[RMDB]
RNA sequence: GGGAACGACUCGAGUAGAGUCGAAAAGUUGAGAGCGUUUAACUUAAGUCUUUUUUAUUAGCUUAAAAAAACUAUAUACACGUGGUGGUAGUCCGCCACUCUAAGGGGACGCCUUUAGAAGAAGAGGGAAAGGCACUAAGCUUCGGCUUAGUGCCAAGCACUGUAAGUGCUUCGGCACUUACAGUGCAAAAGAAACAACAACAACAAC
Reactivity to 2A3 in 0.01 (KOAc 150mM, MgCl2 10mM, bicine 150mM(pH8.5), 24C), signal-to-noise 1, nucleotides 027 to 156: g100u080u090g060a070g000a010g070c020g020u060u090u060a130a070c050u010u090a010a010g040u120c040u190u160u100u050u070u040a150u110u110a030g030c000u060u050a090a000a000a000a000a000a000c050u070a100u050a020u020a220c090a000c070g010u010g010g000u000g020g050u060a050g090u020c010c000g000c010c000a000c000u000c000u000a010a040g020g000g030g000a000c070g040c020c010u050u070u130a030g040a070a020g100a010a010g060a110g040g010g010a010a070a180g020g020c010a020c000u000a020a000g010c020u110u100c300g040g040c010u010u010a000g000u000g010c000c000a000a000